[RMDB]
RNA sequence: GGGAACGACUCGAGUAGAGUCGAAAAACUGGCGCAGCCUUCUCAGUGUUACUCUCCUGUCCUGGACGACUGUCCUCAAGGUCCGUUACCAUCCGAGGAAUCCUGGGACAGCCUGUAACCAGGUAUUUCUCCCACCUCCUCAGUUGUAAUUGGGAGACACCGAUUAAAUGUUCGCAUUUAAUCGGUGAAAAGAAACAACAACAACAAC
Reactivity to DMS in 0.01 (KOAc 150mM, MgCl2 10mM, bicine 150mM(pH8.5), 24C), signal-to-noise 2, nucleotides 027 to 156: a060c090u020g000g010c070g010c060a100g040c050c050u000u000c020u000c020a120g000u000g030u000u010a070c040u000c020u010c040c020u010g020u010c000c030u000g000g030a170c050g040a050c040u010g010u000c010c020u000c030a140a030g020g000u000c010c040g010u020u000a160c060c080a150u030c100c110g000a120g000g000a080a040u020c010c000u000g020g000g000a070c020a020g040c010c030u000g020u010a100a280c080c000a010g010g000u000a030u010u020u010c020u000c000c040c010a070c140c000u000c070c030u000c090a190g030u000u010g000u010a060a130u000u000g000g010g000a080g010a150
Reactivity to 2A3 in 0.01 (KOAc 150mM, MgCl2 10mM, bicine 150mM(pH8.5), 24C), signal-to-noise 2, nucleotides 027 to 156: a000c050u060g040g000c110g010c140a080g040c010c030u130u030c050u040c060a050g020u030g040u150u050a070c030u060c010u010c070c050u060g050u050c020c000u040g000g020a050c040g040a050c020u040g020u050c020c010u090c110a110a040g000g020u010c040c000g050u060u030a110c070c060a130u120c120c110g010a040g000g000a030a060u050c000c000u000g000g010g020a020c020a000g000c000c010u080g010u020a060a030c010c000a000g010g000u010a080u020u100u000c010u000c000c000c010a030c020c010u020c010c020u050c050a030g000u020u020g020u060a090a080u030u070g010g000g010a000g010a000
Structure probing data (DMS and 2A3) for a 207-nucleotide construct. For DMS the reverse transcriptase was MarathonRT. The 2A3 profile rests on 1,490 reads. The reactions ran in a buffer of 150 mM KOAc, 10 mM MgCl2 and 150 mM bicine (pH 8.5), at 24 C.